RNA sequence: GGGAACGACUCGAGUAGAGUCGAAAAAGAGCCGGAUACGUCCGGCUCAAAGGGGGAUACGUGUGGUGCCGUCCGCUCCCCCUAUGGCAUAACAAAUGCACCACACACUAGGCUACGGCCUAGUGAAAAAAGGUGUAUGUGUUCGCACAUACACCAACUCUAAGCACUUCUUCGGAAGUGCUUAGAGAAAAGAAACAACAACAACAAC
Reactivity to 2A3 in 0.01 (KOAc 150mM, MgCl2 10mM, bicine 150mM(pH8.5), 24C), signal-to-noise 2, nucleotides 027 to 156: a000g010a000g000c030c010g010g000a010u030a080c130g040u000c010c000g000g000c000u000c000a010a000a000g010g010g000g000g020a000u010a100c020g010u020g010u000g040g010u000g000c000c010g030u020c030c050g130c040u040c000c010c000c000c010u060a120u110g100g030c090a050u060a260a070c060a070a070a030u080g000c000a000c010c020a000c000a000c000a000c000u000a000g000g000c010u030a000c300g110g000c000c000u010a000g010u020g010a060a010a000a010a010a000g000g000u010g000u000a000u010g020u030g000u010u030c160g040c100a000c000a010u000a000c000a000c000c000a000a010